[RMDB]
RNA sequence: GGGAACGACUCGAGUAGAGUCGAAAACUAAAGUAAAUUCCCGGAAGAAGUCUUUCCUGGGUUUUGAAUUUGCAGUAACAGGUGUGAGCAUUCUAGCAGCAGUUUGAUGAUCAUGUAUGAUACUGCAGCUUAAACAAUAAUUCGUUAUUGUUUAAGCAAAAGAAACAACAACAACAAC
Reactivity to DMS in 0.01 (KOAc 150mM, MgCl2 10mM, bicine 150mM(pH8.5), 24C), signal-to-noise 9, nucleotides 027 to 126: c050u010a070a070a140g000u010a070a060a110u000u000c000c000c010g010g000a050a050g010a220a140g000u020c050u010u000u000c000c000u010g040g010g010u000u000u000u000g000a110a140u020u030u010g010c000a010g010u010a010a060c020a020g010g040u000g010u000g000a030g010c020a030u010u020c050u000a050g020c040a150g010c150a080g010u000u010u000g000a030u000g000a050u000c020a010u000g000u020a080u000g000a110u000a020c000u000g000c010a070
Reactivity to 2A3 in 0.01 (KOAc 150mM, MgCl2 10mM, bicine 150mM(pH8.5), 24C), signal-to-noise 9, nucleotides 027 to 126: c020u080a100a030a030g050u030a020a060a030u030u020c000c000c000g020g010a030a030g050a100a040g110u070c050u030u060u030c030c040u150g000g000g000u010u010u020u030g040a040a050u100u060u130g000c000a000g000u010a030a020c000a020g040g030u060g040u000g080a010g010c020a020u110u050c050u110a030g020c050a030g040c040a050g040u020u060u070g030a010u010g010a010u010c000a000u020g110u140a050u020g030a020u010a010c000u000g000c010a010
The data come from the RNA Mapping Database (RMDB), libraries RFM100 and RFMREP. Chemical mapping of a 177-nucleotide RNA with DMS and 2A3. For 2A3 the reverse transcriptase was SuperScript II with manganese. Conditions: 150 mM KOAc, 10 mM MgCl2 and 150 mM bicine (pH 8.5), 24 C.